This 177-nucleotide RNA was probed chemically with DMS and 2A3. Conditions: 150 mM KOAc, 10 mM MgCl2 and 150 mM bicine (pH 8.5), 24 C. For 2A3, 34,970 sequencing reads were counted. The data come from the RNA Mapping Database (RMDB), library OK2TST. 2A3 adducts were read by reverse transcription with SuperScript II with manganese.

RNA sequence: GGGAACGACUCGAGUAGAGUCGAAAAUGCCGAUUUAGCGCAAGCUCGUUCUAUGCAGGCUUACGGUGAAGGGCUCCCAAGUCGCGUCUUCAGUAUGACUGAGCGUCCGGGGCAUAACUUUGCCCAAGGUAUCCUAUUAUUUCGAUAAUAGGAUACCAAAAGAAACAACAACAACAAC
Reactivity to DMS in 0.01 (KOAc 150mM, MgCl2 10mM, bicine 150mM(pH8.5), 24C), signal-to-noise 9, nucleotides 027 to 126: u010g010c010c000g000a190u000u000u000a050g010c020g010c040a020a030g010c020u000c060g020u000u010c220u010a130u010g020c030a050g000g010c010u000u000a030c020g000g010u000g000a030a030g010g000g010c010u000c010c000c020a130a140g010u000c100g010c030g000u000c070u010u000c030a040g010u000a130u010g010a080c020u000g010a090g000c020g010u010c120c150g010g010g010g000c010a030u000a080a110c160u000u000u000g010c000c000c010a080a080
Reactivity to 2A3 in 0.01 (KOAc 150mM, MgCl2 10mM, bicine 150mM(pH8.5), 24C), signal-to-noise 9, nucleotides 027 to 126: u100g000c000c010g170a160u020u030u070a110g050c020g010c030a020a010g000c010u040c060g080u180u070c130u210a160u270g030c030a010g050g000c000u010u020a020c020g070g020u030g020a020a020g020g010g000c010u020c000c000c010a010a020g140u120c060g000c030g050u030c080u130u030c040a030g010u080a220u300g170a130c020u010g010a000g010c010g020u030c070c100g040g010g000g000c020a020u050a180a140c060u140u110u060g000c000c000c000a010a020